[RMDB]
RNA sequence: GGGAACGACUCGAGUAGAGUCGAAAAGAUAUGGAUCCUGAACUACUCCCUAAGCAUCGAAGAACUCGGAAACGAGGGAGAUGCGAAGGGAGCAGGAUCCUAAGUCAAAUCCGACUUCGGUCGGAAACGUAUCAGGGUGGUUCGCCACCCUGAUACGAAAAGAAACAACAACAACAAC
Reactivity to 2A3 in 0.01 (KOAc 150mM, MgCl2 10mM, bicine 150mM(pH8.5), 24C), signal-to-noise 1, nucleotides 027 to 126: g060a020u060a040u180g010g020a000u010c000c010u000g040a080a030c060u190a080c010u170c020c010c000u000a060a000g010c000a000u020c030g090a300a050g000a050a050c010u000c000g010g010a090a060a020c010g000a010g000g000g000a060g000a020u000g000c010g010a020a040g000g000g000a000g000c000a000g000g000a000u020c000c000u040a030a010g010u020c020a030a000a120u030c010c010g000a010c020u050u100c300g050g000u020c010g000g080a070a020a020
Reactivity to DMS in 0.01 (KOAc 150mM, MgCl2 10mM, bicine 150mM(pH8.5), 24C), signal-to-noise 2, nucleotides 027 to 126: g000a060u000a300u010g020g000a000u000c010c000u040g010a060a030c040u020a300c000u000c020c010c000u000a040a300g010c010a000u010c010g040a120a080g000a140a110c030u010c000g030g000a120a030a210c020g060a030g020g010g010a030g000a010u000g000c030g010a160a000g000g000g040a010g020c030a010g000g000a000u000c000c000u000a010a130g000u000c020a070a110a160u020c000c010g000a030c020u000u020c210g010g010u000c000g000g000a040a020a080